[RMDB]
RNA sequence: GGGAACGACUCGAGUAGAGUCGAAAACUUGAGAUGUCUGUUAAACAUCCAGAUAGGAAUGUCAAAGAUGCACUUGUGUUUAAGAGUCAGGAAUGCAAGAGGGAAUUUUAGGCUAGAAACAAAAAGUUAGAAAUUAUUCGAUACAGAUGGUAUUUAACAACGUAUAAGCAUUCGUGCUUAUACGUUGAAAAGAAACAACAACAACAAC
Reactivity to DMS in 0.01 (KOAc 150mM, MgCl2 10mM, bicine 150mM(pH8.5), 24C), signal-to-noise 4, nucleotides 027 to 156: c030u000u000g000a130g020a080u000g010u000c010u000g010u000u010a060a110a070c010a020u000c010c030a210g010a130u000a090g030g020a120a080u000g020u000c040a050a110a120g010a080u000g010c040a130c060u000u010g020u010g020u010u010u000a070a100g010a090g000u000c050a080g000g010a030a070u000g020c030a030a100g010a090g020g010g010a090a070u000u010u010u000a100g030g030c030u000a030g000a100a060a140c040a050a050a030a060a110g030u000u000a070g000a090a070a100u000u010a110u010u000c030g000a130u000a100c060a100g010a080u000g000g000u000a060u000u010u010a060a240
Reactivity to 2A3 in 0.01 (KOAc 150mM, MgCl2 10mM, bicine 150mM(pH8.5), 24C), signal-to-noise 8, nucleotides 027 to 156: c040u070u090g050a060g030a130u020g030u030c060u050g090u110u150a100a120a010c010a020u000c010c010a000g030a090u090a030g020g050a070a080u070g020u050c040a080a050a030g030a040u070g020c040a030c060u070u050g040u010g040u110u060u090a070a020g030a010g030u020c020a010g000g070a050a020u080g010c020a040a030g020a040g060g020g030a040a040u060u090u040u070a030g000g000c010u030a020g090a050a080a020c060a030a110a050a010a010g040u080u060a040g070a030a070a030u130u100a080u080u160c040g020a040u040a080c020a030g080a070u070g050g040u080a100u100u180u120a070a030
The data come from the RNA Mapping Database (RMDB), library OK3TST. This 207-nucleotide RNA was probed chemically with DMS and 2A3. DMS adducts were read by reverse transcription with MarathonRT. For 2A3, 8,086 sequencing reads were counted. The reactions ran in a buffer of 150 mM KOAc, 10 mM MgCl2 and 150 mM bicine (pH 8.5), at 24 C. For 2A3 the reverse transcriptase was SuperScript II with manganese. Values cover nucleotides 27 to 156.